The record gives the reactivity of an RNA of 207 nucleotides to 2A3.
Conditions: 150 mM KOAc, 10 mM MgCl2 and 150 mM bicine (pH 8.5), 24 C.
For 2A3, 435 sequencing reads were counted.
2A3 adducts were read by reverse transcription with SuperScript II with manganese.
It was measured as part of the RMDB library OK3TST.
RNA sequence: GGGAACGACUCGAGUAGAGUCGAAAAUUGCGCGGGAAAACCGUCCUCGUCUUGCUGGUAAGAGCCUAACAUGUAAAAUUCAUUCACGGCCUGGUAGGGGCAGUGUCCCUUGGACGUCUCCAGCCCGUAGGCCUUGGCCGCGUUGCGAAGGCUGGUGCGGCCAUGUGGAAUUCGUUCCACAUGGCCGAAAAGAAACAACAACAACAAC
Reactivity to 2A3 in 0.01 (KOAc 150mM, MgCl2 10mM, bicine 150mM(pH8.5), 24C), signal-to-noise 1, nucleotides 027 to 156: u170u240g020c040g000c070g000g060g050a030a110a000a000c090c000g020u010c020c000u000c000g040u000c010u170u200g080c130u020g040g090u150a130a030g020a020g000c000c000u060a090a040c030a050u090g000u280a000a110a270a110u140u070c020a020u070u100c040a040c050g010g000c000c000u020g020g020u150a110g000g000g040g000c080a080g040u010g110u270c020c000c000u000u050g090g000a030c020g120u040c050u050c010c080a010g010c050c000c000g040u040a110g010g000c030c000u010u050g000g050c060c000g020c020g090u190u080g000c000g020a050a030g000g010c000u000g010g040u020g020